This 177-nucleotide RNA was probed chemically with DMS and 2A3. For DMS the reverse transcriptase was MarathonRT. The reactions ran in a buffer of 150 mM KOAc, 10 mM MgCl2 and 150 mM bicine (pH 8.5), at 24 C. For 2A3 the reverse transcriptase was SuperScript II with manganese. Source: RMDB libraries RFM100 and RFMREP, as collected in RNAgym.
[RMDB]
RNA sequence: GGGAACGACUCGAGUAGAGUCGAAAACUUAUUUGCUAUGACAUAACUACAUUUGACUACUCAAAAUCAUUUGUUAUCACAAGCCCGACUACAUCAGUGACAUUAAGAAAUAGAGGACAACUAUUUUAUUACUGUCAGUAUUCGUACUGACAGUAAUAAAAGAAACAACAACAACAAC
Reactivity to DMS in 0.01 (KOAc 150mM, MgCl2 10mM, bicine 150mM(pH8.5), 24C), signal-to-noise 2, nucleotides 027 to 126: c020u000u000a120u020u020u000g000c050u020a000u000g010a080c100a090u000a060a070c070u030a070c030a050u000u010u030g010a070c060u020a040c100u020c110a030a050a150a110u010c040a040u030u020u010g010u000u000a050u000c090a040c090a040a100g040c040c040c000g020a090c020u060a080c070a040u010c020a050g000u000g000a060c140a080u000u010a050a060g010a080a050a040u000a010g020a100g000g040a030c180a020a060c060u000a070u000u010u030u000
Reactivity to 2A3 in 0.01 (KOAc 150mM, MgCl2 10mM, bicine 150mM(pH8.5), 24C), signal-to-noise 7, nucleotides 027 to 126: c040u100u110a070u170u130u090g030c040u080a050u140g040a030c010a080u130a090a050c030u090a030c050a100u090u040u090g040a020c010u070a050c050u070c080a030a060a020a220u040c050a060u020u100u070g070u030u080a060u080c040a020c010a130a020g000c000c000c010g050a050c020u090a010c010a060u060c020a040g020u020g070a020c020a050u070u130a110a040g050a060a050a010u130a040g080a010g070g010a010c010a020a010c050u020a080u040u000u000u000